[RMDB]
RNA sequence: GGGAACGACUCGAGUAGAGUCGAAAAACAAAGAGAUCGAAAGAGCAAUGUGUAACUCAUCAUCCUAGCGAAUGGUUGGGCUCGAAAGAUCGAGUGUUACCAUCACAUCCGGGACGCUAGAAAAAAACACCAUCUAGACGUUCGCGUCUAGAUGGUGAAAAGAAACAACAACAACAAC
Reactivity to DMS in 0.01 (KOAc 150mM, MgCl2 10mM, bicine 150mM(pH8.5), 24C), signal-to-noise 1, nucleotides 027 to 126: a050c120a050a060a100g000a150g000a030u010c020g000a110a110a060g020a070g000c020a010a060u000g020u000g000u010a060a050c040u000c060a100u000c040a060u010c050c030u000a030g010c070g010a080a020u000g010g030u000u010g000g030g000c030u010c010g000a020a190a100g000a150u000c000g010a000g000u000g010u010u000a040c020c000a000u000c120a070c060a070u020c050c050g000g040g030a130c010g020c040u010a030g010a000a000a100a040a060a010a100
Reactivity to 2A3 in 0.01 (KOAc 150mM, MgCl2 10mM, bicine 150mM(pH8.5), 24C), signal-to-noise 2, nucleotides 027 to 126: a010c030a000a050a010g080a020g010a090u080c070g090a090a080a050g030a010g000c000a060a050u090g010u010g030u030a070a050c020u030c080a040u010c000a020u040c020c030u020a040g030c020g010a100a040u000g000g030u040u040g050g050g010c000u030c020g100a150a170a070g260a170u070c020g000a000g010u140g250u100u050a010c020c020a000u000c020a030c020a120u060c050c010g010g030g030a010c030g000c010u010a020g120a100a040a010a000a000a000a010